[RMDB]
Structure probing data (2A3 and DMS) for a 177-nucleotide construct. For 2A3 the reverse transcriptase was SuperScript II with manganese. The 2A3 profile rests on 63,275 reads.
RNA sequence: GGGAACGACUCGAGUAGAGUCGAAAAUAGACGAGAGAUAUAGCAAUCGUCAUACCCAUAUCACUCUAUGUGACGAUUGGUGAACGCUACAUUAGAGUGAGUGGGUAGCGUUCACACACCUUCUCGAGAUAGUAAGGAGAUUCGUCUCUUUGCUAUCAAAAGAAACAACAACAACAAC
Reactivity to 2A3 in 0.01 (KOAc 150mM, MgCl2 10mM, bicine 150mM(pH8.5), 24C), signal-to-noise 9, nucleotides 027 to 126: u140a010g090a020c020g000a000g000a000g020a040u040a010u080a170g090c030a010a020u010c000g010u010c000a000u060a030c010c010c000a010u020a040u030c020a010c010u010c010u020a020u070g020u010g020a010c010g030a040u020u060g080g010u070g070a020a010c000g000c000u010a000c000a060u040u040a010g000a000g040u040g010a020g030u060g060g070g000u000a000g000c010g030u030u040c020a020c000a010c000a020c030c020u100u050c010u010c010g060a070
Reactivity to DMS in 0.01 (KOAc 150mM, MgCl2 10mM, bicine 150mM(pH8.5), 24C), signal-to-noise 8, nucleotides 027 to 126: u040a080g010a160c050g000a040g000a110g010a100u020a070u030a160g030c030a020a040u000c000g020u000c010a050u000a050c050c040c030a090u020a100u010c010a000c000u000c020u010a100u020g000u000g000a010c010g010a060u010u000g010g020u000g010a040a020c000g010c000u000a010c000a150u010u020a040g000a040g000u000g000a090g000u020g020g020g010u000a000g000c020g000u000u000c000a020c030a140c230a090c210c070u010u000c000u000c010g010a300